The data come from the RNA Mapping Database (RMDB), library M2PK50. This 177-nucleotide RNA was probed chemically with DMS and 2A3. Values cover nucleotides 27 to 126. The RNA was probed in 150 mM KOAc, 10 mM MgCl2 and 150 mM bicine (pH 8.5) at 24 C. 2A3 adducts were read by reverse transcription with SuperScript II with manganese.
RNA sequence: GGGAACGACUCGAGUAGAGUCGAAAACCGCACUUCUUCGGAAGUGCGGAAAUACCGAGUUUGUACCUCGGUAGAAGUACAUAACCCUUGGAAACAAGGGAAAAAGCGUGAGCUUCGGCUCACGCAACGUAUUAGGUUAGUUCGCUAACCUAAUACGAAAAGAAACAACAACAACAAC
Reactivity to DMS in 0.01 (KOAc 150mM, MgCl2 10mM, bicine 150mM(pH8.5), 24C), signal-to-noise 8, nucleotides 027 to 126: c010c000g010c000a010c000u000u000c000u000u000c170g030g010a010a010g010u000g000c010g010g010a010a040a090u000a040c010c000g000a020g000u010u000u010g010u010a100c300c010u000c000g000g020u000a010g000a070a100g010u010a080c170a090u010a110a130c000c010c000u000u000g000g000a120a100a180c000a010a020g010g000g010a010a020a050a120a060g000c000g010u000g000a020g010c000u000u010c180g020g000c000u000c000a000c000g010c000a010a010
Reactivity to 2A3 in 0.01 (KOAc 150mM, MgCl2 10mM, bicine 150mM(pH8.5), 24C), signal-to-noise 5, nucleotides 027 to 126: c000c000g000c000a000c000u010u000c000u040u040c090g140g010a010a000g000u000g010c010g000g010a020a010a000u030a000c000c000g000a010g020u110u200u240g120u150a100c010c000u000c000g010g000u010a010g020a070a010g060u100a050c030a110u150a160a150c000c000c000u000u000g030g010a040a040a010c010a010a020g000g000g000a070a040a010a000a000g000c000g000u000g000a000g000c000u050u080c260g080g000c000u000c000a000c000g000c000a010a000
High 2A3 reactivity points to a flexible backbone, as in loops and unpaired stretches. DMS adducts were read by reverse transcription with MarathonRT.